This 177-nucleotide RNA was probed chemically with 2A3 and DMS. It was measured as part of the RMDB library RFMREP. For DMS the reverse transcriptase was MarathonRT. The RNA was probed in 150 mM KOAc, 10 mM MgCl2 and 150 mM bicine (pH 8.5) at 24 C. For DMS, 3,182 sequencing reads were counted. The 2A3 profile rests on 1,093 reads.

[RMDB]
RNA sequence: GGGAACGACUCGAGUAGAGUCGAAAACUUGGAGAGUGAGGUGUAAUAUGGGGGCAGCUGAUUUUUGGGGUUUCAUAUAUGUAGUUUCAAGAUUAGCCAUUGUUGCGGCAGUAGUUUACUUCUUAUAGCAAUAUAAUCUGUUCGCAGAUUAUAUUGCAAAAGAAACAACAACAACAAC
Reactivity to 2A3 in 0.01 (KOAc 150mM, MgCl2 10mM, bicine 150mM(pH8.5), 24C), signal-to-noise 2, nucleotides 027 to 126: c050u030u080g030g020a020g010a000g030u040g020a060g000g060u010g020u110a150a230u180a220u300g020g000g000g040g040c010a010g010c040u020g050a100u010u070u060u050u120g000g000g000g000u040u080u020c040a020u110a010u000a000u170g020u010a040g040u000u050u030c010a040a010g010a090u040u070a000g000c030c010a040u090u060g090u020u070g020c070g010g000c020a020g040u020a000g000u050u070u060a070c010u020u100c000u060u070a100u140a170
Reactivity to DMS in 0.01 (KOAc 150mM, MgCl2 10mM, bicine 150mM(pH8.5), 24C), signal-to-noise 3, nucleotides 027 to 126: c080u000u000g010g010a070g010a060g010u010g010a070g000g010u000g000u010a080a080u010a070u000g000g000g000g020g010c110a050g020c060u010g010a050u000u000u010u010u000g020g000g000g010u000u000u010c050a040u000a110u000a060u020g010u000a070g010u000u000u010c040a040a070g010a050u010u000a070g020c030c060a090u000u010g000u010u000g020c090g000g020c060a070g010u000a040g010u010u000u000a060c130u000u000c020u010u000a110u000a210